[RMDB]
RNA sequence: GGGAACGACUCGAGUAGAGUCGAAAACAACCUUGCGGAGAACAUGUUUCGACACAUGAGGAGCUUUCUGCGGAGGUAUCCUGGGUAUAUGAGCCGUGCCCAUGCGGAUGAGGUGGUAGGCCUCUACCGUGUCAUCCCUAUUCGUAGGGAUGACACGAAAAGAAACAACAACAACAAC
Reactivity to 2A3 in 0.01 (KOAc 150mM, MgCl2 10mM, bicine 150mM(pH8.5), 24C), signal-to-noise 3, nucleotides 027 to 126: c030a010a040c000c020u030u120g070c040g030g030a030g010a060a020c010a040u060g090u010u090u100c090g080a020c020a000c010a110u080g050a030g130g080a050g030c000u020u120u020c020u060g040c000g070g030a020g000g030u030a080u030c010c010u050g000g010g060u080a070u010a080u200g100a020g050c020c020g040u020g010c000c020c010a020u110g030c050g030g070a060u050g010a060g060g020u060g010g230u130a100g070g110c000c000u000c010u020a060c000
Reactivity to DMS in 0.01 (KOAc 150mM, MgCl2 10mM, bicine 150mM(pH8.5), 24C), signal-to-noise 3, nucleotides 027 to 126: c210a080a060c020c030u000u000g000c040g020g000a080g010a040a110c050a030u000g000u000u000u010c210g000a130c210a060c030a040u000g010a130g000g000a120g020c090u000u000u000c020u000g030c020g020g000a050g000g000u000a040u000c010c010u010g000g000g010u000a050u010a040u010g020a050g010c030c020g010u000g000c010c010c010a110u000g030c060g010g020a200u000g010a070g010g020u000g010g030u010a100g010g000c030c040u010c020u000a200c120
Overview:
The record gives the reactivity of an RNA of 177 nucleotides to 2A3 and DMS. Conditions: 150 mM KOAc, 10 mM MgCl2 and 150 mM bicine (pH 8.5), 24 C. The DMS profile rests on 3,136 reads. Source: RMDB library OK2TRN, as collected in RNAgym.